[RMDB]
Structure probing data (2A3) for a 177-nucleotide construct. The reactions ran in a buffer of 150 mM KOAc, 10 mM MgCl2 and 150 mM bicine (pH 8.5), at 24 C. For 2A3, 720 sequencing reads were counted.
RNA sequence: GGGAACGACUCGAGUAGAGUCGAAAACACCAUUCAGCGUCAGAUCGCCGGUAAUAUCCAGUUCGUCACCGUCUUUCUUCACGCUGGUGGAGGUGAAUGUUGCCUGUGGAUAUUUUGCGGUAUUGAACUCAGCUGCCUGAUUCGUCAGGCAGCUGAGAAAAGAAACAACAACAACAAC
Reactivity to 2A3 in 0.01 (KOAc 150mM, MgCl2 10mM, bicine 150mM(pH8.5), 24C), signal-to-noise 1, nucleotides 027 to 126: c010a000c010c000a010u300u300c000a000g000c010g020u010c000a000g010a030u010c000g070c010c000g050g000u030a030a060u070a080u170c110c030a030g010u110u140c010g050u090c040a010c010c000g000u010c030u050u050u000c000u040u020c040a010c020g020c010u010g030g050u020g010g060a140g040g090u020g030a170a110u080g010u060u040g070c010c030u040g030u060g150g000a000u020a070u130u040u080u080g000c000g000g130u000a080u010u080g060a060a030